Background:
The record gives the reactivity of an RNA of 170 nucleotides to 2A3 and DMS. Reactivities are given for positions 27 through 129. For DMS the reverse transcriptase was MarathonRT. 2A3 adducts were read by reverse transcription with SuperScript II with manganese.

[RMDB]
RNA sequence: GGGAACGACUCGAGUAGAGUCGAAAACCACAAUAGGAUGGCAAAAGGGGACUCGGGUCCGUCGUUCCAUCCUUUUCUUACCUUUUGGCCGGCAUGGCCCCAGCCUCCUCGCUGGCGCCGGCUGGGCGCGGUCGAUAGUUCGCUAUCGACAAAAGAAACAACAACAACAAC
Reactivity to 2A3 in 0.01 (KOAc 150mM, MgCl2 10mM, bicine 150mM(pH8.5), 24C), signal-to-noise 9, nucleotides 027 to 129: c010c000a060c030a050a080u150a050g010g010a030u030g020g030c070a010a030a070a090g050g030g000g030a020c030u050c200g270g050g030u020c030c010g100u100c030g050u070u020c000c000a020u030c010c000u020u010u030u020c030u050u140a090c010c000u060u070u090u190g080g010c000c000g020g010c080a170u160g050g000c000c010c000c010a010g010c000c020u130c010c020u080c080g010c020u000g010g000c000g000c010c000g050g010c020u050g020g010g010c100g000c040g070
Reactivity to DMS in 0.01 (KOAc 150mM, MgCl2 10mM, bicine 150mM(pH8.5), 24C), signal-to-noise 9, nucleotides 027 to 129: c040c020a120c230a070a050u040a040g000g040a060u000g000g000c180a060a050a110a150g000g000g000g000a020c050u040c300g030g050g040u020c010c030g000u030c050g020u050u020c040c010a010u010c000c000u000u000u040u030c090u050u040a150c110c030u030u020u030u040g020g010c060c000g020g010c040a080u030g030g030c040c090c010c000a020g000c010c110u040c100c060u010c210g020c040u000g020g000c280g000c000c050g010g010c010u000g000g000g000c040g000c190g000